[RMDB]
RNA sequence: GGGAACGACUCGAGUAGAGUCGAAAACGGUCUGUUCGCAGACCGAAAAAAUCCUAAGUCGUCUAAGACAGAAGAAGACAUGCUUCAGUCGGAAACGACUGUAAGCAACAGCUUCUUUCGAGACGAUAUGGAAAAAAGCUAGGUUUCGACCUAGCAAACCCCUUGAUAGAUUCGUCUAUCAAGGGGUAAAAGAAACAACAACAACAAC
Reactivity to DMS in 0.01 (KOAc 150mM, MgCl2 10mM, bicine 150mM(pH8.5), 24C), signal-to-noise 1, nucleotides 027 to 156: c010g000g000u000c000u010g000u000u000c300g050c020a010g000a030c020c020g010a000a010a040a100a050a050u000c000c020u020a050a230g000u000c040g040u000c000u000a190a200g000a150c300a010g000a030a020g000a040a010g000a110c090a300u000g020c000u000u000c000a000g000u000c000g000g010a160a080a290c000g020a020c000u000g000u010a000a020g030c010a090a060c000a140g000c020u000u000c010u000u010u000c060g000a060g000a020c010g010a000u000a300u010g000g020a020a040a120a080a050a140g030c000u000a010g000g040u000u000u040c280g020a100c000c010u000a000g020c000a010a040
Reactivity to 2A3 in 0.01 (KOAc 150mM, MgCl2 10mM, bicine 150mM(pH8.5), 24C), signal-to-noise 3, nucleotides 027 to 156: c010g010g010u020c000u010g060u100u120c230g030c080a000g000a000c000c000g000a000a000a000a000a000a010u040c030c010u080a160a080g040u000c000g000u000c010u040a210a110g040a160c090a060g020a030a000g000a020a000g030a050c040a130u040g000c000u010u000c010a000g010u010c000g010g050a110a060a020c000g000a000c000u000g000u090a000a000g000c020a030a040c000a030g030c000u000u000c000u020u010u030c020g030a010g000a010c000g000a010u010a070u130g010g000a050a050a070a000a020a140g030c000u070a000g000g080u010u120u210c270g100a060c020c000u010a000g000c000a000a000